[RMDB]
RNA sequence: GGGAACGACUCGAGUAGAGUCGAAAACACAAUCGGCACGAUUCUAGAAUUCUGCAUUAAAAAUUACAAUCAAGAUCUAAUCGGUAAAAGCUAUUUCAAAAAACAGAUUCGUGAAUACGCCGAUAAAGCCUUGGAAAAGCUUACGGUGGCAUUUAUCCGUUGGUGCGGUAUUCGUACCGCACCAACGAAAAGAAACAACAACAACAAC
Reactivity to 2A3 in 0.01 (KOAc 150mM, MgCl2 10mM, bicine 150mM(pH8.5), 24C), signal-to-noise 1, nucleotides 027 to 156: c110a040c070a030a240u010c000g000g080c060a020c060g030a070u030u030c070u070a090g000a030a020u300u100c000u000g000c020a020u060u300a080a000a010a080a020u170u070a020c030a000a190u240c050a000a090g000a020u000c020u100a180a070u140c070g120g000u190a220a250a000a000g060c050u070a140u130u130u280c200a230a090a050a000a000a000c020a000g000a020u000u030c050g000u030g060a000a000u120a170c090g010c000c000g000a000u000a010a000a010g000c060c020u030u050g030g190a000a000a190a000g020c030u090u130a090c100g020g020u060g000g010c030a040u000u070u210a070u160c070

Chemical mapping of a 207-nucleotide RNA with 2A3. It was measured as part of the RMDB library OK3TST. The 2A3 profile rests on 314 reads.